Source: RMDB library OK3TST, as collected in RNAgym. Structure probing data (2A3 and DMS) for a 207-nucleotide construct. The reactions ran in a buffer of 150 mM KOAc, 10 mM MgCl2 and 150 mM bicine (pH 8.5), at 24 C.
RNA sequence: GGGAACGACUCGAGUAGAGUCGAAAAUAACCACGUAUCACAGCAUACACGGGGUAGAGAGAAACAAUCGCUAGCAUAUAACUUUAAAUUAGCUUGUUCAAUGCCACGCAUCAAAGAUGAGCGCGCAGCACCACACUGCAACGUAUUUGCGCGAUUACGAUCAUAAGUAGUUCGCUACUUAUGAUCGAAAAGAAACAACAACAACAAC
Reactivity to 2A3 in 0.01 (KOAc 150mM, MgCl2 10mM, bicine 150mM(pH8.5), 24C), signal-to-noise 9, nucleotides 027 to 156: u130a020a030c020c010a050c060g040u040a030u110c060a060c060a240g040c060a050u060a060c030a030c060g030g000g030g010u100a030g050a020g010a010g030a150a070a010c040a030a030u090c050g010c040u040a040g030c080a050u090a050u070a270a160c060u120u150u220a070a150a130u110u060a060g010c000u030u040g020u060u070c040a050a030u040g010c020c020a040c060g010c020a040u050c090a100a100a060g090a110u100g030a020g020c020g000c010g000c020a010g000c020a040c040c020a040c010a010c030u050g010c030a040a060c070g040u070a110u040u100u060g010c030g000c010g010a000u010u070a030
Reactivity to DMS in 0.01 (KOAc 150mM, MgCl2 10mM, bicine 150mM(pH8.5), 24C), signal-to-noise 3, nucleotides 027 to 156: u020a100a110c010c010a060c090g020u000a080u000c040a290c080a190g000c040a200u000a030c000a070c040g000g000g020g020u000a050g000a100g010a070g000a190a070a070c070a030a090u010c040g040c030u010a060g010c060a140u000a120u000a040a050c050u010u010u000a060a080a100u000u000a100g010c020u010u000g010u000u000c040a060a070u000g030c000c030a030c020g020c010a050u000c040a060a090a160g010a090u000g010a060g010c030g030c080g050c010a030g000c050a090c050c060a090c080a070c020u000g010c000a050a030c100g030u000a100u010u000u010g030c020g010c020g010a070u000u000a180
DMS adducts were read by reverse transcription with MarathonRT.